[RMDB]
RNA sequence: GGGAACGACUCGAGUAGAGUCGAAAAGGAAGCCAUGCAUGGACAAGUAGACUGCAGUCCAGGGAUAUGGCAAUUAGAUUGCACACAUCUAGAAGGAAAAGUAAUUCUAGUAGCAGUCCAUGUAGCCAACACCAUGCCCAUUCGUGGGCAUGGUGUUAAAAGAAACAACAACAACAAC
Reactivity to DMS in 0.01 (KOAc 150mM, MgCl2 10mM, bicine 150mM(pH8.5), 24C), signal-to-noise 2, nucleotides 027 to 126: g020g000a080a170g000c010c040a110u000g000c020a020u000g010g000a010c010a180a060g010u000a090g000a100c140u000g000c070a140g000u000c020c010a090g010g000g000a100u020a040u000g000g000c000a030a110u020u020a080g000a300u000u000g010c000a090c160a050c160a020u000c000u000a010g000a100a050g000g000a110a030a050a180g000u020a090a130u010u010c010u010a080g010u030a060g040c100a020g000u000c000c080a060u000g000u000a180g020c040c040